[RMDB]
RNA sequence: GGGAACGACUCGAGUAGAGUCGAAAAGAUAUGGAAGUGCUCCGAUAAGCUGAUAUCGGAAACGAUAUACAGCUUUUGACGGAGCAUUCCUAAGUCAAAGGUCUCCGCCGUUCGCGGCGGAGACCAAGCAUAUAUCGUACUUCGGUACGAUAUAUGCAAAAGAAACAACAACAACAAC
Reactivity to DMS in 0.01 (KOAc 150mM, MgCl2 10mM, bicine 150mM(pH8.5), 24C), signal-to-noise 2, nucleotides 027 to 126: g000a040u010a230u010g000g000a000a020g010u000g020c010u000c000c000g000a140u000a020a020g000c000u000g010a050u000a000u000c010g000g000a050a040a090c000g000a020u000a000u000a130c000a010g000c000u000u020u000u020g000a200c050g010g000a010g010c000a010u000u000c000c000u000a040a130g010u010c030a070a150a140g010g000u000c010u000c000c000g000c000c000g020u000u010c250g020c000g020g010c040g000g010a000g010a000c000c000a000a010
Reactivity to 2A3 in 0.01 (KOAc 150mM, MgCl2 10mM, bicine 150mM(pH8.5), 24C), signal-to-noise 1, nucleotides 027 to 126: g010a010u060a020u140g010g010a000a090g300u030g030c000u010c000c020g070a180u100a270a050g000c000u000g000a000u000a010u000c010g010g010a020a030a020c010g000a010u000a010u070a140c020a010g000c000u020u020u030u060g050a010c000g000g010a000g000c000a000u010u000c000c000u010a070a010g050u010c050a110a080a150g010g020u000c010u020c000c030g050c010c000g050u100u130c300g020c000g060g000c000g000g010a010g010a010c000c010a000a000
This 177-nucleotide RNA was probed chemically with DMS and 2A3. For 2A3, 4,276 sequencing reads were counted. The RNA was probed in 150 mM KOAc, 10 mM MgCl2 and 150 mM bicine (pH 8.5) at 24 C. As a SHAPE reagent, 2A3 marks flexible, mostly unpaired nucleotides at the ribose 2'-OH. It was measured as part of the RMDB library TTRDEL.